RNA sequence: GGGAACGACUCGAGUAGAGUCGAAAAGAUAUGGAGACUAUCCGAUAAGCUACUAGUCGGAAACGACUAUAGCUUUUGACGGAUACCUCCUAAGUCAAACUCCGAUCGAGUUCGCUCGAUCGGAGAAGUAAUGGAACCUCUUCGGAGGUUCCAUUACAAAAGAAACAACAACAACAAC
Reactivity to DMS in 0.01 (KOAc 150mM, MgCl2 10mM, bicine 150mM(pH8.5), 24C), signal-to-noise 1, nucleotides 027 to 126: g020a000u020a250u010g010g000a050g010a100c300u000a000u010c000c020g020a190u000a030a020g060c000u000a000c300u000a000g020u000c020g020g000a070a050a130c020g000a000c000u000a020u020a000g010c000u000u000u000u000g020a110c050g000g000a020u000a010c120c000u000c000c000u000a000a150g000u010c020a120a170a060c000u000c000c000g020a010u000c020g020a030g000u020u020c210g000c010u000c010g020a000u010c020g000g000a000g040a010a030

Notes: The record gives the reactivity of an RNA of 177 nucleotides to DMS. The DMS profile rests on 626 reads. Reactivities are given for positions 27 through 126. The data come from the RNA Mapping Database (RMDB), library TTRDEL. Conditions: 150 mM KOAc, 10 mM MgCl2 and 150 mM bicine (pH 8.5), 24 C.